[RMDB]
The record gives the reactivity of an RNA of 207 nucleotides to 2A3 and DMS. For DMS, 12,037 sequencing reads were counted. The reactions ran in a buffer of 150 mM KOAc, 10 mM MgCl2 and 150 mM bicine (pH 8.5), at 24 C. Source: RMDB library M2RFPK, as collected in RNAgym.

RNA sequence: GGGAACGACUCGAGUAGAGUCGAAAAUACCGUCUUCUCUCCGACGGUUUCAAUCCAUAGCUUCACGUUGUGUAGCGUAGGUGGAAGGUAUCGUGUGGUGUAUAAACACCACAUAGUCUCUUAGGGGUCAAGCUGAUAAACUUCGGUUUAUCAGCAAUCAUAAUUACCGGUUCGCCGGUAAUUAUGAAAAAGAAACAACAACAACAAC
Reactivity to 2A3 in 0.01 (KOAc 150mM, MgCl2 10mM, bicine 150mM(pH8.5), 24C), signal-to-noise 6, nucleotides 027 to 156: u090a000c000c000g020u000c020u150u040c070u010c010u000c010c020g010a010c000g020g030u010u030u060c030a030a040u020c010c010a060u050a110g010c010u060u070c020a020c050g300u210u180g000u070g020u070a000g010c020g060u070a050g060g050u010g010g030a040a040g080g030u120a070u170c070g000u010g000u000g030g000u010g050u030a100u110a270a260a020c010a000c010c000a000c000a000u010a010g010u000c010u000c010u100u120a030g000g020g000g000u040c070a070a030g000c000u000g000a000u010a000a000a000c010u030u050c150g080g000u010u000u000a000u000c000a000g000c000a000a000
Reactivity to DMS in 0.01 (KOAc 150mM, MgCl2 10mM, bicine 150mM(pH8.5), 24C), signal-to-noise 4, nucleotides 027 to 156: u000a060c010c000g020u010c020u000u000c080u010c060u000c050c080g010a030c020g000g010u000u000u000c080a080a120u000c010c020a130u000a170g010c030u000u000c030a060c050g010u000u000g030u000g030u010a060g030c030g030u010a050g010g020u020g000g010a080a070g020g000u010a040u000c060g040u000g030u010g020g040u000g040u000a140u010a130a140a130c010a020c000c000a010c000a010u000a030g020u000c040u010c030u010u000a130g030g020g000g000u010c060a080a150g030c010u000g010a020u000a010a000a010c010u000u010c300g060g020u000u000u000a010u010c000a000g010c010a000a020